[RMDB]
RNA sequence: GGGAACGACUCGAGUAGAGUCGAAAAAAUUGGAGCGUAAUCGCGUCUUGACGUGAGUGAGCCUAGACUGUAGGCUAUCCCAAGUGGGAUAGCAUAGCUCACAAUUCGCUGAUCUACAGUCAUACAAAUGCGAAGGAUCAUUCGUGAUCCUUCGCAUAAAAGAAACAACAACAACAAC
Reactivity to 2A3 in 0.01 (KOAc 150mM, MgCl2 10mM, bicine 150mM(pH8.5), 24C), signal-to-noise 1, nucleotides 027 to 126: a000a060u210u110g030g040a020g000c000g000u000a020a040u080c010g000c000g040u040c030u100u280g160a030c030g010u020g010a010g020u030g000a000g000c030c000u030a070g000a030c020u010g000u000a030g020g030c010u000a000u030c000c000c010a130a160g250u300g000g000g000a000u000a000g000c000a000u010a030g000c010u000c030a030c000a010a040u080u090c000g000c000u010g050a060u140c020u010a000c020a000g000u010c010a020u160a040c050a030a290
Reactivity to DMS in 0.01 (KOAc 150mM, MgCl2 10mM, bicine 150mM(pH8.5), 24C), signal-to-noise 1, nucleotides 027 to 126: a050a080u010u000g000g050a000g000c010g000u040a050a300u000c040g020c000g010u010c040u000u000g050a000c000g010u000g000a150g040u000g000a030g000c020c040u000a080g020a000c000u020g000u000a040g000g010c000u000a000u000c000c000c000a300a120g040u020g020g020g000a030u000a000g000c020a050u000a030g000c000u000c000a020c020a040a050u000u000c050g050c010u000g000a050u000c010u000a020c020a020g000u000c000a140u020a100c270a070a150